RNA sequence: GGGAACGACUCGAGUAGAGUCGAAAACAAAGUCUGUUCGCAGACUUUGAAACCUGUUAUAAUCGUCAGGAAAGGUGAUUACACCUUCUUAAGCAGAUUAUAAAAGGACGCCGUUCGCGGCGUCCAAGUUAUACACCGACUUCGGUCGGUGUAUAACAAAAGAAACAACAACAACAAC
Reactivity to DMS in 0.01 (KOAc 150mM, MgCl2 10mM, bicine 150mM(pH8.5), 24C), signal-to-noise 1, nucleotides 027 to 126: c000a010a020a010g010u000c000u000g000u000u020c210g020c000a020g020a030c000u000u000u010g020a070a070a150c010c000u020g040u020u000a010u000a000a000u010c010g020u000c090a080g000g010a010a030a020g020g030u000g020a250u000u000a130c020a000c010c000u000u000c010u000u000a110a110g020c090a120g010a010u000u000a000u000a010a020a140a120g000g020a000c000g030c000c000g010u000u010c110g020c000g030g040c000g020u000c000c000a000a010
Reactivity to 2A3 in 0.01 (KOAc 150mM, MgCl2 10mM, bicine 150mM(pH8.5), 24C), signal-to-noise 1, nucleotides 027 to 126: c000a000a000a000g000u000c000u000g050u050u110c240g000c080a000g000a000c000u000u010u000g020a020a000a000c010c000u010g030u090u040a020u020a010a020u010c040g070u070c030a010g000g000a100a120a060g000g000u030g010a130u110u300a170c000a000c020c000u020u050c000u070u050a080a010g040c040a020g030a030u010u020a010u020a000a140a010a040g000g000a000c020g020c040c000g030u060u040c220g000c000g070g000c000g000u000c000c000a000a000